Chemical mapping of a 177-nucleotide RNA with 2A3 and DMS. The DMS profile rests on 8,144 reads. The 2A3 profile rests on 3,939 reads.
[RMDB]
RNA sequence: GGGAACGACUCGAGUAGAGUCGAAAAUUCCCCUAUUUCGAUAGGGGAACACCUGCGGGCGGCUCGCAGUUCCGACUUCCUCCUCCUCUGAGUCAAAGGCCGAUAGGCCUCGGUUCGCCGAGGCCAAUCCAUAGUCCUAAUUCGUUAGGACUAUGGAAAAAGAAACAACAACAACAAC
Reactivity to 2A3 in 0.01 (KOAc 150mM, MgCl2 10mM, bicine 150mM(pH8.5), 24C), signal-to-noise 2, nucleotides 027 to 126: u020u000c000c000c000c000u020a020u040u100u070c170g090a000u020a000g000g020g000g010a000a010c020a040c000c000u020g020c020g050g030g020c030g030g020c050u030c030g020c010a020g020u080u010c030c040g080a080c030u080u030c020c010u000c010c020u000c010c000u030c040u090g010a010g000u020c030a070a050a050g110g020c010c010g020a020u070a120g010g010c010c000u000c010g020g020u020u030c150g030c040c000g010a000g000g010c000c000a000a000
Reactivity to DMS in 0.01 (KOAc 150mM, MgCl2 10mM, bicine 150mM(pH8.5), 24C), signal-to-noise 5, nucleotides 027 to 126: u000u000c010c000c000c000u000a000u000u000u010c130g010a030u000a010g010g010g000g010a010a000c130a060c110c010u000g010c050g010g000g010c040g000g010c020u000c030g010c040a060g000u000u000c020c020g000a090c070u000u000c030c010u000c020c020u000c030c010u010c030u000g010a100g010u000c050a080a100a130g000g010c020c020g010a120u010a130g020g010c000c000u000c000g000g000u000u010c220g020c000c000g000a000g010g010c000c000a020a030
Description: The RNA was probed in 150 mM KOAc, 10 mM MgCl2 and 150 mM bicine (pH 8.5) at 24 C.